[RMDB]
RNA sequence: GGGAACGACUCGAGUAGAGUCGAAAAUUAUCCGUACUGGAAAAAAUGGAUAUGCGCGAACCACAAUGUGUGGACGAUGUGUUAUCUGUUGAUGCGAACGCGCGUGAAGUCGCCAGAAAAGAGGUGAUCACAGAAAGAAAUUCGUUUCUUUCUGUGAAAAAGAAACAACAACAACAAC
Reactivity to 2A3 in 0.01 (KOAc 150mM, MgCl2 10mM, bicine 150mM(pH8.5), 24C), signal-to-noise 5, nucleotides 027 to 126: u070u010a030u000c010c000g030u100a110c060u090g020g150a080a120a030a030a000a040u060g010g000a020u020a010u150g000c030g000c010g040a100a130c010c000a030c030a130a250u250g140u060g020u050g190g030a130c040g100a190u160g110u000g010u100u050a050u000c020u040g040u040u050g050a120u060g010c030g040a120a040c040g010c000g000c000g060u020g010a000a000g060u040c020g000c050c000a030g070a040a100a010a010g110a020g040g040u050g020a010
Reactivity to DMS in 0.01 (KOAc 150mM, MgCl2 10mM, bicine 150mM(pH8.5), 24C), signal-to-noise 8, nucleotides 027 to 126: u010u010a060u000c010c010g020u010a120c100u000g000g010a000a020a090a120a060a030u010g000g000a070u000a020u000g010c010g010c010g010a120a190c040c010a020c020a120a100u010g030u010g040u000g000g010a140c050g010a110u010g020u010g010u000u000a030u000c030u000g010u000u000g000a100u000g010c070g010a090a170c100g010c040g010c040g010u000g010a110a140g000u000c070g010c010c010a070g000a060a050a090a120g000a080g000g010u000g000a130
Structure probing data (2A3 and DMS) for a 177-nucleotide construct.
2A3 adducts were read by reverse transcription with SuperScript II with manganese.
It was measured as part of the RMDB library OK2TRN.